[RMDB]
RNA sequence: GGGAACGACUCGAGUAGAGUCGAAAAGCUGAUUUGAAGUGCAUGUACAUUGAGGAAUAGCUCCCAUGUGGAGGGAGAACACAUAUAACAUGACACAGAGCUAUUACCAGGAGGACACCGCAUGGUAGUCAACCCCUAAAUUCGUUUAGGGGUUGACAAAAGAAACAACAACAACAAC
Reactivity to 2A3 in 0.01 (KOAc 150mM, MgCl2 10mM, bicine 150mM(pH8.5), 24C), signal-to-noise 2, nucleotides 027 to 126: g000c010u020g080a150u180u100u300g110a280a030g020u010g060c020a020u020g010u030a040c060a170u000u150g060a090g080g040a130a030u040a080g070c000u000c000c030c010a060u150g120u180g060g170a150g050g000g000a040g000a050a030c050a010c000a000u090a000u010a170a030c020a010u020g230a030c000a020c020a050g020a000g000c030u040a060u110u050a050c000c030a040g090g020a010g020g020a000c000a020c090c020g020c060a040u120g100g020u050a080
Reactivity to DMS in 0.01 (KOAc 150mM, MgCl2 10mM, bicine 150mM(pH8.5), 24C), signal-to-noise 3, nucleotides 027 to 126: g030c040u000g010a150u000u000u010g030a110a140g020u010g030c040a000u000g000u010a110c140a060u000u000g010a180g010g010a110a060u020a120g040c030u000c010c040c000a140u010g020u030g010g000a200g000g010g000a070g000a070a110c080a140c050a010u000a070u010a100a040c070a010u000g020a160c020a040c070a100g000a050g000c010u000a050u000u000a090c020c000a090g010g000a060g010g000a090c030a050c010c080g000c100a050u010g010g020u000a100